[RMDB]
RNA sequence: GGGAACGACUCGAGUAGAGUCGAAAAAUGGGUUGGGAUUACCCUAAGUGCGAUAGAGCUAUGCCCAAUUUGCUACGCAUCUUUGCUAGCUUAAUAUUGGCACGUAAACAUAGUACGUGUUGCAAUACUUCUGAGCGGUUCUACCGUCUUGCUAAUGAGAGUUGAGUCGAUUCGUCGACUCAACUCUAAAAGAAACAACAACAACAAC
Reactivity to 2A3 in 0.01 (KOAc 150mM, MgCl2 10mM, bicine 150mM(pH8.5), 24C), signal-to-noise 1, nucleotides 027 to 156: a000u070g010g000g000u000u010g190g000g040a110u110u130a020c000c050c000u110a150a050g100u140g070c030g000a090u050a050g000a000g020c000u010a070u220g010c000c000c030a000a010u190u140u040g050c000u010a030c100g010c030a000u060c270u170u300u290g000c000u020a010g000c000u000u050a140a060u030a020u030u020g000g000c030a000c010g000u000a000a180a000c140a190u220a080g110u050a040c000g000u000g010u050u090g060c000a000a010u040a140c110u180u190c110u080g000a000g030c040g040g000u050u070c030u010a000c000c000g050u040c040u080u060g030c030u110a130a160u300g110